[RMDB]
RNA sequence: GGGAACGACUCGAGUAGAGUCGAAAACGGUGGGUGCACACCCCACCUCAUAGGGGAGUGGUGGUGGUGAGGGUGCUGUACUGGGAGAAGGGCUCUGACAUCGAACAGCCUGGGAGCGCACCUGAGCGUAAUGAAGGUGGUUCGCCACCUUCAUUACAAAAGAAACAACAACAACAAC
Reactivity to 2A3 in 0.01 (KOAc 150mM, MgCl2 10mM, bicine 150mM(pH8.5), 24C), signal-to-noise 4, nucleotides 027 to 126: c030g020g050u050g040g020g010u100g020c070a010c000a000c060c000c010c000a010c010c000u010c010a090u130a030g040g020g000g000a100g020u090g010g040u040g020g040u120g020g020u050g010a080g010g000g000u020g000c020u050g020u110a090c060u050g020g030g030a100g030a060a100g030g010g000c020u000c070u100g090a100c030a170u140c060g040a100a070c010a030g040c000c020u010g000g000g030a080g020c040g000c020a040c030c010u050g060a040g060c020
Reactivity to DMS in 0.01 (KOAc 150mM, MgCl2 10mM, bicine 150mM(pH8.5), 24C), signal-to-noise 3, nucleotides 027 to 126: c150g000g010u010g000g010g020u010g010c110a160c100a060c120c000c000c000a000c020c010u010c050a040u010a200g000g000g010g010a110g010u000g010g010u020g000g000u000g010g010u000g010a140g010g000g020u000g010c030u000g060u010a060c100u000g010g010g010a120g010a120a090g000g020g010c040u000c080u020g010a090c120a060u000c150g010a100a110c140a050g010c010c030u000g000g010g000a160g000c150g000c030a040c040c020u000g010a100g010c160